[RMDB]
RNA sequence: GGGAACGACUCGAGUAGAGUCGAAAAUGCGAAAGCAAUCCAGAAAAGAGUACCCUGUGCUUAUGACAAGACUGCCUUGGCAUUAGAGGUAAAAUCUGUUCAGAUUAGCUUUUUGGGUCCUUUGACAGCAUUUAUCAUUGUUCGCAAUGAUAAAUGCAAAAGAAACAACAACAACAAC
Reactivity to 2A3 in 0.01 (KOAc 150mM, MgCl2 10mM, bicine 150mM(pH8.5), 24C), signal-to-noise 4, nucleotides 027 to 126: u100g000c010g030a040a000a000g000c020a000a020u010c000c010a040g100a030a090a000a000g050a010g020u050a020c010c010c000u030g030u020g040c010u120u120a060u120g020a020c030a040a090g070a090c070u090g040c020c000u020u020g050g000c040a090u080u240a060g030a030g030g000u030a000a050a020a200u010c010u010g060u080u080c010a010g020a160u060u050a040g020c000u120u140u090u180u070g070g020g000u000c020c000u080u060u120g070a050c060a030
Reactivity to DMS in 0.01 (KOAc 150mM, MgCl2 10mM, bicine 150mM(pH8.5), 24C), signal-to-noise 4, nucleotides 027 to 126: u010g010c080g010a060a020a070g010c010a040a050u000c010c040a170g010a060a050a060a010g020a080g010u000a020c010c000c000u010g010u000g000c010u000u000a060u010g020a040c020a040a140g020a150c250u010g010c020c010u000u000g000g000c050a050u010u010a060g010a060g000g010u000a020a030a080a100u000c020u000g010u010u000c030a140g000a070u010u000a090g010c010u000u000u000u000u000g010g010g010u000c030c010u000u000u000g010a120c260a120